RNA sequence: GGGAACGACUCGAGUAGAGUCGAAAAGGAGUUUCACUCACUGUAGACUCUGAGCGCAGAGUGUCAGUCGUGCUACCACAUGCACGUGAUCAGAGUAUGUGUGAACUCUGACUGACGACACAAUCGCUUGUGUCCUAUAUAAUGAAACUCGUGAGUCACGAUUUAUGGUGUUCGCACCAUAAAUCGUAAAAGAAACAACAACAACAAC
Reactivity to DMS in 0.01 (KOAc 150mM, MgCl2 10mM, bicine 150mM(pH8.5), 24C), signal-to-noise 2, nucleotides 027 to 156: g000g010a020g010u000u000u000c020a000c010u000c130a090c080u000g000u000a050g000a060c010u030c000u000g020a300g020c050g010c040a040g030a110g040u000g010u000c000a020g000u000c020g010u000g010c020u010a300c070c050a050c080a130u010g050c000a080c070g000u020g020a190u000c070a140g000a100g050u000a040u000g040u000g000u000g020a060a050c000u010c000u010g030a040c020u000g010a060c030g000a020c000a010c000a020a150u000c080g050c120u000u000g000u000g000u000c020c020u000a020u000a050u010a020a030u000g000a050a000a020c050u000c000g010u020g000a160g000u000c120
Reactivity to 2A3 in 0.01 (KOAc 150mM, MgCl2 10mM, bicine 150mM(pH8.5), 24C), signal-to-noise 5, nucleotides 027 to 156: g110g010a000g000u000u000u010c010a020c030u010c010a050c040u010g000u010a010g010a020c010u000c020u020g040a120g150c070g000c030a000g010a000g010u000g000u000c000a000g020u010c000g030u020g000c020u070a160c060c090a070c030a080u060g000c020a010c070g050u090g090a140u150c030a020g000a000g040u040a040u140g150u040g070u060g070a040a020c010u000c030u050g010a020c000u000g000a000c000g010a000c000a000c010a010a130u290c070g010c150u020u010g000u000g000u010c000c000u010a010u000a000u010a040a050u020g000a000a000a000c000u000c020g030u080g070a060g070u100c060
An RNA of 207 nucleotides, treated with DMS and 2A3 and read out base by base. The reactions ran in a buffer of 150 mM KOAc, 10 mM MgCl2 and 150 mM bicine (pH 8.5), at 24 C.